[RMDB]
RNA sequence: GGGAACGACUCGAGUAGAGUCGAAAACACAGUCAUCUAAUCGCAUGGUGAUUUCAGCAACCCUGUGAAGUUGGGCUGGUAUUACUACACCCUCUUCAAGAGCCGGCAUAAGGGAGGGGCUGGGGAGCAGCAGUGAAGAUUUCGAUCUUCACUGCUGAAAAGAAACAACAACAACAAC
Reactivity to 2A3 in 0.01 (KOAc 150mM, MgCl2 10mM, bicine 150mM(pH8.5), 24C), signal-to-noise 3, nucleotides 027 to 126: c060a000c000a010g030u020c010a050u010c050u100a160a060u100c060g020c060a030u070g000g030u030g060a090u060u190u150c040a050g020c040a040a020c000c020c030u020g000u010g040a000a030g090u170u040g050g000g010c020u010g030g040u080a130u110u200a060c060u020a020c000a020c010c000c000u040c000u020u050c070a070a040g030a030g130c020c040g070g010c070a050u060a190a050g060g030g020a080g000g000g030g020c050u040g000g010g000g000a030g000
Reactivity to DMS in 0.01 (KOAc 150mM, MgCl2 10mM, bicine 150mM(pH8.5), 24C), signal-to-noise 3, nucleotides 027 to 126: c100a190c160a070g010u000c010a020u010c030u000a110a060u000c180g010c100a070u020g000g010u020g020a110u000u000u010c160a070g000c080a210a100c030c010c010u010g020u000g020a010a020g020u000u000g020g010g010c210u010g020g010u010a050u010u000a080c110u000a100c090a110c020c010c010u000c020u000u010c050a040a100g010a090g020c060c050g000g000c120a070u000a080a150g000g000g010a050g030g010g000g030c070u000g000g000g000g020a120g000
Chemical mapping of a 177-nucleotide RNA with 2A3 and DMS. 2A3 adducts were read by reverse transcription with SuperScript II with manganese. For DMS the reverse transcriptase was MarathonRT.